[RMDB]
Annotation
An RNA of 177 nucleotides, treated with DMS and read out base by base. High DMS reactivity at an A or C suggests that its Watson-Crick edge is free. For DMS the reverse transcriptase was MarathonRT.

RNA sequence: GGGAACGACUCGAGUAGAGUCGAAAAGAUAUGGACUGACGAGCGACGAAGUUCGGACGAAUAAAGGAUAUUACUCGGAAACGAGUAAUAUCCUUUACUAUCCGAACAGAGCUCGUAGUCCUAAGUCCACUACUAAUCACUUCGGUGAUUAGUAGUGAAAAGAAACAACAACAACAAC
Reactivity to DMS in 0.01 (KOAc 150mM, MgCl2 10mM, bicine 150mM(pH8.5), 24C), signal-to-noise 7, nucleotides 027 to 126: g010a110u010a300u000g000g010a010c000u000g010a020c000g010a020g010c000g010a240c300g000a150a150g010u000u000c000g000g000a020c120g010a080a130u000a010a010a020g000g000a020u000a010u000u000a000c000u010c010g010g000a130a120a190c000g010a000g000u000a000a000u000a000u000c000c000u000u000u000a000c080u000a300u000c000c000g000a010a010c000a050g000a170g000c000u000c000g010u010a000g000u000c000c000u000a020a060g000u000c040